This 177-nucleotide RNA was probed chemically with 2A3 and DMS. Conditions: 150 mM KOAc, 10 mM MgCl2 and 150 mM bicine (pH 8.5), 24 C. The data come from the RNA Mapping Database (RMDB), library OK2TRN. Reactivities are rounded to 0.1 and cut off at 0 and 3. 2A3 adducts were read by reverse transcription with SuperScript II with manganese.
[RMDB]
RNA sequence: GGGAACGACUCGAGUAGAGUCGAAAAUUCAUGGAGGUGUCCGGCAAGCAGUACGACCGUAUCGUGAUGAACCCGCCGUUCUCCAAGGGGCGCGACAUCCAGCACGUACAGCACGCCUACAGCCUGCGUUUGCUAGUUACUUCGGUAACUAGCAAACAAAAGAAACAACAACAACAAC
Reactivity to 2A3 in 0.01 (KOAc 150mM, MgCl2 10mM, bicine 150mM(pH8.5), 24C), signal-to-noise 2, nucleotides 027 to 126: u050u030c010a050u140g110g040a050g000g040u030g010u050c080c030g010g000c010a080a060g030c000a030g000u010a000c010g030a070c150c090g090u090a160u300c230g050u250g070a020u010g000a040a040c020c050c000g040c020c010g220u180u000c130u030c120c020a090a090g080g010g020g000c020g010c040g000a040c020a020u030c000c010a000g050c020a020c010g010u020a000c000a000g000c000a000c040g000c000c000u020a010c000a010g040c020c020u060g030c050
Reactivity to DMS in 0.01 (KOAc 150mM, MgCl2 10mM, bicine 150mM(pH8.5), 24C), signal-to-noise 3, nucleotides 027 to 126: u000u000c050a130u000g000g000a040g000g010u000g000u000c300c270g020g050c000a080a280g000c030a100g010u000a030c060g000a100c110c070g000u010a140u010c130g010u000g000a040u000g000a080a120c200c110c000g020c040c020g010u000u000c050u000c110c150a090a130g000g000g020g010c030g030c070g000a190c020a010u020c030c000a050g020c040a080c040g000u010a010c020a060g020c020a130c300g000c030c030u010a030c180a150g000c010c030u010g010c060